[RMDB]
RNA sequence: GGGAACGACUCGAGUAGAGUCGAAAAUACAAAAAAUUAGCCGGGUGUGGUGGUGCAUGCCUAUAAUUCCAGCUAUUCGGAAGGCUGAGGCAGGAGAAUCGAUUGAACUCAGGAGGUGGAGGUUGCAGAGAGCAGAGAUUGUGCCAUUGCACUCCAACCCUCCGUAGUCAUUCGUGACUACGGAGGGAAAAGAAACAACAACAACAAC
Reactivity to 2A3 in 0.01 (KOAc 150mM, MgCl2 10mM, bicine 150mM(pH8.5), 24C), signal-to-noise 1, nucleotides 027 to 156: u220a010c060a000a020a030a000a000a030u110u030a010g090c160c040g010g000g030u020g010u050g030g040u050g020g050u020g030c000a000u000g000c010c000u060a070u000a200a030u080u040c010c000a000g000c090u100a170u070u290c010g000g020a070a050g000g000c040u020g000a030g020g080c000a000g040g050a010g040a070a000u090c030g120a090u080u100g010a040a020c060u020c120a060g140g000a020g010g000u060g030g020a050g000g030u160u100g000c000a070g040a020g010a030g080c010a000g020a000g000a040u120u050g010u070g050c100c000a040u070u090g020c030a010c030u060c000c010a040a070
Record summary: An RNA of 207 nucleotides, treated with 2A3 and read out base by base. Values are in units of 0.01, from 0 to 300, in steps of 10. It was measured as part of the RMDB library OK3TST.